[RMDB]
The data come from the RNA Mapping Database (RMDB), libraries RFM100 and RFMREP. This 177-nucleotide RNA was probed chemically with 2A3 and DMS. High DMS reactivity at an A or C suggests that its Watson-Crick edge is free. The reactions ran in a buffer of 150 mM KOAc, 10 mM MgCl2 and 150 mM bicine (pH 8.5), at 24 C.
RNA sequence: GGGAACGACUCGAGUAGAGUCGAAAACUGACGCACCACUGGUGCAUCGGUUGUACUGUCAAGUGCAUGGCCGAGUAGCUAAGUGCGGACGGGAUAAGCGCUGAAAGCAUCUAAGCGCCAAGCCCUUCAGUGUCUACGCAUUCGUGCGUAGACACUGAAAAGAAACAACAACAACAAC
Reactivity to 2A3 in 0.01 (KOAc 150mM, MgCl2 10mM, bicine 150mM(pH8.5), 24C), signal-to-noise 3, nucleotides 027 to 126: c000u010g010a010c000g000c000a010c000c000a080c010u040g000g030u070g030c300a100u010c010g000g020u040u000g020u030a000c010u090g260u300c180a170a010g000u000g000c030a070u130g100g000c000c000g010a000g000u050a000g010c010u020a040a210g000u000g000c000g010g010a040c070g010g000g010a030u060a130a000g000c000g000c000u000g110a070a040a040g130c010a040u050c030u060a050a020g020c010g000c000c000a080a080g030c000c000c000u000u000
Reactivity to DMS in 0.01 (KOAc 150mM, MgCl2 10mM, bicine 150mM(pH8.5), 24C), signal-to-noise 2, nucleotides 027 to 126: c040u000g020a260c050g000c010a000c000c000a160c060u000g000g000u000g000c190a070u000c000g000g000u000u000g000u000a060c060u030g000u000c300a040a060g080u000g010c000a010u050g030g080c000c000g000a060g000u080a300g000c040u000a000a000g020u000g000c000g100g000a260c160g000g010g060a050u000a220a300g040c020g000c000u000g000a030a070a070g020c220a080u000c060u000a270a000g000c000g040c000c030a110a300g000c020c000c000u000u020